[RMDB]
RNA sequence: GGGAACGACUCGAGUAGAGUCGAAAAGUCAGGGUUCGCCCUGACAAAAGCGUACUACUGUUGAACGCGCUGUGAACUACCUCGGUACGGUCCCAAAUAGGACCGGACGAGGCACAGCUAAGCAACAGUAUCGCAAAGGCCUACGUUCGCGUAGGCCGGUACACGAAGGAUUCGUCCUUCGUGUACCAAAAGAAACAACAACAACAAC
Reactivity to 2A3 in 0.01 (KOAc 150mM, MgCl2 10mM, bicine 150mM(pH8.5), 24C), signal-to-noise 4, nucleotides 027 to 156: g010u000c010a010g000g030g010u020u110c140g140c020c000c020u030g020a020c020a000a060a000a020g050c040g040u120a130c040u000a010c000u030g020u030u020g040a240a080c100g020c020g000c060u000g000u000g030a090a090c140u150a100c240c000u020c020g060g020u300a020c000g000g000u030c020c020c000a150a180a070u300a070g000g010a000c000c000g010g010a020c000g000a000g000g000c000a000c000a000g000c000u030a090a010g040c000a000a000c030a010g000u020a010u160c000g000c000a110a070a020g000g020c000c000u000a000c010g000u020u070c270g000c010g130u000a000g010g000c010c000
Reactivity to DMS in 0.01 (KOAc 150mM, MgCl2 10mM, bicine 150mM(pH8.5), 24C), signal-to-noise 1, nucleotides 027 to 156: g020u030c000a000g000g010g000u010u000c280g040c010c000c010u020g010a030c000a060a010a040a140g040c020g050u010a060c200u000a050c000u000g020u020u010g040a030a060c020g040c170g000c010u000g040u010g010a160a250c090u010a210c010c000u000c010g070g010u000a180c000g080g040u030c000c000c000a030a170a270u000a060g060g160a020c020c000g000g000a030c010g000a010g030g000c040a000c030a030g010c010u010a110a080g010c010a010a020c030a020g000u000a010u000c040g060c050a070a200a080g030g000c000c010u000a020c000g010u000u010c300g090c080g000u000a040g000g060c000c000

Structure probing data (2A3 and DMS) for a 207-nucleotide construct. High 2A3 reactivity points to a flexible backbone, as in loops and unpaired stretches. The RNA was probed in 150 mM KOAc, 10 mM MgCl2 and 150 mM bicine (pH 8.5) at 24 C.